This 177-nucleotide RNA was probed chemically with 2A3 and DMS.
[RMDB]
RNA sequence: GGGAACGACUCGAGUAGAGUCGAAAAGCAAUGAACUCUUCCAUGAAAUUGUCAUAGUUUUGUUCAAGUUUAUUCACGCGCUGAUUCAGGCGGUUAUAAGCCAUAACAGCAGGGAUAGCGGCAAACAUCAAUUAUGCUGGUUCGCCAGCAUAAUUGAAAAAGAAACAACAACAACAAC
Reactivity to 2A3 in 0.01 (KOAc 150mM, MgCl2 10mM, bicine 150mM(pH8.5), 24C), signal-to-noise 1, nucleotides 027 to 126: g030c040a030a140u230g000a050a050c000u000c000u150u000c050c000a000u010g030a040a090a100u300u250g160u120c030a050u030a170g000u000u030u030u010g010u000u020c030a070a030g030u070u070u090a150u150u080c080a030c220g220c030g000c050u040g030a150u020u020c010a010g040g040c030g030g000u010u010a110u020a040a040g080c110c010a030u020a050a070c000a000g000c000a000g020g000g010a060u000a060g090c030g030g020c020a000a000a150c020a070
Reactivity to DMS in 0.01 (KOAc 150mM, MgCl2 10mM, bicine 150mM(pH8.5), 24C), signal-to-noise 3, nucleotides 027 to 126: g020c120a070a090u010g010a060a040c010u000c050u000u000c010c030a040u000g010a020a130a150u010u020g010u010c030a020u000a030g020u000u000u000u000g020u000u010c060a070a300g020u000u020u010a060u010u000c090a070c110g010c050g020c030u000g020a050u000u000c080a110g000g010c020g010g010u000u000a040u010a060a190g020c140c120a100u010a030a050c060a050g020c010a050g010g000g000a020u000a020g010c030g020g010c100a050a040a060c170a120
The reactions ran in a buffer of 150 mM KOAc, 10 mM MgCl2 and 150 mM bicine (pH 8.5), at 24 C. For DMS, 2,490 sequencing reads were counted. The data come from the RNA Mapping Database (RMDB), library OK2TRN. In probing experiments dimethyl sulfate is read out at A N1 and C N3, which are open when not base-paired.